Overview: Chemical mapping of a 177-nucleotide RNA with DMS and 2A3. For 2A3, 1,015 sequencing reads were counted. The data come from the RNA Mapping Database (RMDB), library OK2TRN.
[RMDB]
RNA sequence: GGGAACGACUCGAGUAGAGUCGAAAAGAAACUAUAAAAUAGGGAGUAUAAAAGGAUAGUGGACUUUAAGCUUAUUAACAUAAAAGCCUCACUGUCUGGAAGGGGUGGUUAAUAAUUAUAGGCUAUAAACGUUCUAAAGAUUCGUCUUUAGAACGUUAAAAGAAACAACAACAACAAC
Reactivity to DMS in 0.01 (KOAc 150mM, MgCl2 10mM, bicine 150mM(pH8.5), 24C), signal-to-noise 3, nucleotides 027 to 126: g000a250a070a120c050u000a080u010a040a020a110a170u000a140g000g000g000a150g030u010a090u010a060a100a110a160g020g010a010u000a010g040u000g000g010a050c030u000u010u000a130a100g020c080u000u010a080u010u020a060a100c030a080u010a060a050a010a050g000c000c000u020c010a020c030u000g020u000c010u000g010g010a110a070g000g000g000g020u020g000g000u000u000a030a070u000a080a060u010u000a040u010a040g000g010c050u000a050u000a070
Reactivity to 2A3 in 0.01 (KOAc 150mM, MgCl2 10mM, bicine 150mM(pH8.5), 24C), signal-to-noise 2, nucleotides 027 to 126: g000a000a040a010c030u040a030u080a300a070a090a130u100a090g060g010g020a120g110u110a020u070a290a180a050a000g000g020a000u000a000g010u000g010g020a040c030u070u020u070a040a000g000c020u090u040a060u110u160a300a020c030a030u170a140a230a020a000g010c000c020u070c060a010c020u030g020u090c000u080g000g000a050a030g000g000g000g000u060g010g000u070u070a090a030u030a020a000u230u060a040u110a080g050g000c000u040a020u180a170